An RNA of 177 nucleotides, treated with DMS and 2A3 and read out base by base. For DMS, 8,422 sequencing reads were counted. For 2A3, 9,123 sequencing reads were counted. The data come from the RNA Mapping Database (RMDB), library OK2TST. Values cover nucleotides 27 to 126. Conditions: 150 mM KOAc, 10 mM MgCl2 and 150 mM bicine (pH 8.5), 24 C.

RNA sequence: GGGAACGACUCGAGUAGAGUCGAAAACGGACUUUUUUGCGUCGCUUGUCCUGCAACGGCGCGGCGCUGAGCGGGAGACACCACCUGCGGAGCUGCGGCCAGAUGCGCGGCGAGGUGCGCGCACCCGCAUCCUCGAAUCAUUCGUGAUUCGAGGAUGAAAAGAAACAACAACAACAAC
Reactivity to DMS in 0.01 (KOAc 150mM, MgCl2 10mM, bicine 150mM(pH8.5), 24C), signal-to-noise 6, nucleotides 027 to 126: c100g010g010a150c100u010u000u000u010u010u000g010c010g030u000c020g010c030u010u010g010u000c020c020u000g010c140a060a160c200g000g010c020g000c000g010g010c010g010c010u010g000a130g020c020g010g010g010a170g000a260c120a060c140c080a060c010c010u000g010c040g010g000a100g010c020u000g010c030g010g010c050c070a120g010a120u010g010c030g010c150g010g010c010g020a040g000g010u000g020c090g010c010g000c080a140c020c010c020g010
Reactivity to 2A3 in 0.01 (KOAc 150mM, MgCl2 10mM, bicine 150mM(pH8.5), 24C), signal-to-noise 5, nucleotides 027 to 126: c040g080g050a040c070u120u120u090u070u260u200g000c010g010u020c010g010c090u070u100g030u110c000c020u040g010c020a060a040c040g000g000c000g000c000g020g000c030g000c040u060g040a030g010c020g000g050g000a100g040a070c050a040c060c020a040c010c010u080g040c050g030g040a090g000c020u020g000c020g110g120c030c020a110g030a160u210g020c010g000c020g000g010c020g020a050g020g060u090g020c100g000c020g000c020a040c000c000c000g010